[RMDB]
RNA sequence: GGGAACGACUCGAGUAGAGUCGAAAAUGUCAAAAACGAUAAUGAAUUAGUUGCGACAGUAAAAACCGCAAAACAGGUGAUUAAACACAUACUUAAGGGUAAAAUGACAUUGACAGUUCGCAUGAAAUUAUUACGUAAGUUAAUACGUAGAUUUACCAUAGAGAUGAGCAUUCGUGCUCAUCUCUAUAAAAGAAACAACAACAACAAC
Reactivity to 2A3 in 0.01 (KOAc 150mM, MgCl2 10mM, bicine 150mM(pH8.5), 24C), signal-to-noise 2, nucleotides 027 to 156: u020g020u050c000a000a000a050a080a060c120g060a120u190a250a140u220g140a040a070u080u110a110g090u060u020g020c030g000a000c010a000g010u020a000a020a040a000a000c020c060g060c130a000a000a150a070c100a020g030g090u000g010a020u000u190a000a170a000c060a000c000a110u200a050c010u050u100a020a110g060g000g000u000a000a000a120a100u140g010a020c000a020u020u000g060a050c020a050g090u060u010c030g020c060a020u030g090a020a140a000u040u040a030u000u090a030c020g000u010a000a080g030u090u160a080a070u010a020c000g000u000a020g020a040u070u070u060a030c010c030
Reactivity to DMS in 0.01 (KOAc 150mM, MgCl2 10mM, bicine 150mM(pH8.5), 24C), signal-to-noise 2, nucleotides 027 to 156: u000g000u040c060a060a140a090a100a140c060g000a080u010a130a240u000g020a070a130u000u000a120g000u000u000g010c090g020a080c080a130g000u000a050a070a100a090a110c040c000g010c070a070a050a110a160c120a030g010g000u010g010a110u000u000a060a110a100c050a050c080a120u030a060c060u010u000a150a040g000g000g010u000a030a040a060a130u000g010a050c040a050u000u010g000a090c020a110g030u000u000c020g030c020a100u000g010a080a060a080u000u000a110u000u000a020c020g010u010a020a140g030u000u010a100a110u000a020c040g040u000a040g000a140u000u010u000a030c070c010
The data come from the RNA Mapping Database (RMDB), library OK3TST. This 207-nucleotide RNA was probed chemically with 2A3 and DMS. The reactions ran in a buffer of 150 mM KOAc, 10 mM MgCl2 and 150 mM bicine (pH 8.5), at 24 C. For DMS the reverse transcriptase was MarathonRT. The 2A3 profile rests on 683 reads.